[RMDB]
About this RNA
Chemical mapping of a 207-nucleotide RNA with 2A3 and DMS. 2A3 adducts were read by reverse transcription with SuperScript II with manganese. The 2A3 profile rests on 1,003 reads.
RNA sequence: GGGAACGACUCGAGUAGAGUCGAAAAAUCUUGUCAUACACAUCUCUCAUAAGAACACGACAGGAAAGAAGAGAUUUGAAACUCACAAUAAUAAUCACUCAAUAAUGACUCCCUAGUAAGUCAGCUCUCUUACAGCACAUAGAGGACAAUAAAUGAAGCAUCCCAUAAAUUUCGAUUUAUGGGAUGCAAAAGAAACAACAACAACAAC
Reactivity to 2A3 in 0.01 (KOAc 150mM, MgCl2 10mM, bicine 150mM(pH8.5), 24C), signal-to-noise 2, nucleotides 027 to 156: a020u030c040u030u000g020u030c010a040u050a180c030a040c030a170u000c030u010c000u000c040a100u140a120a090g060a160a020c060a010c060g060a020c020a000g030g080a000a000a080g090a080a000g010a000g000a050u100u020u040g060a190a060a020c040u070c030a040c030a070a090u150a140a030u060a100a030u090c030a010c090u080c020a020a090u090a100a040u090g040a080c020u020c010c000c000u000a030g040u020a110a000g050u020c000a030g000c000u010c000u010c010u050u030a020c080a030g040c030a050c010a060u060a010g040a000g040g010a000c030a030a060u120a300a010a030u130g010a080a010
Reactivity to DMS in 0.01 (KOAc 150mM, MgCl2 10mM, bicine 150mM(pH8.5), 24C), signal-to-noise 1, nucleotides 027 to 156: a080u000c030u000u000g000u010c030a200u020a100c040a120c090a140u000c050u000c010u000c100a050u010a020a130g020a110a110c030a120c130g020a060c000a010g010g000a100a110a090g000a120a110g000a090g000a120u000u000u000g000a100a060a070c030u000c050a030c030a030a020u000a050a010u000a130a090u010c040a090c030u020c030a020a170u010a120a050u000g000a160c010u000c020c040c000u000a160g000u010a030a070g040u010c020a020g030c050u000c000u000c000u000u010a000c030a150g000c000a100c040a050u000a050g000a090g050g070a040c030a010a050u020a050a020a120u000g000a170a230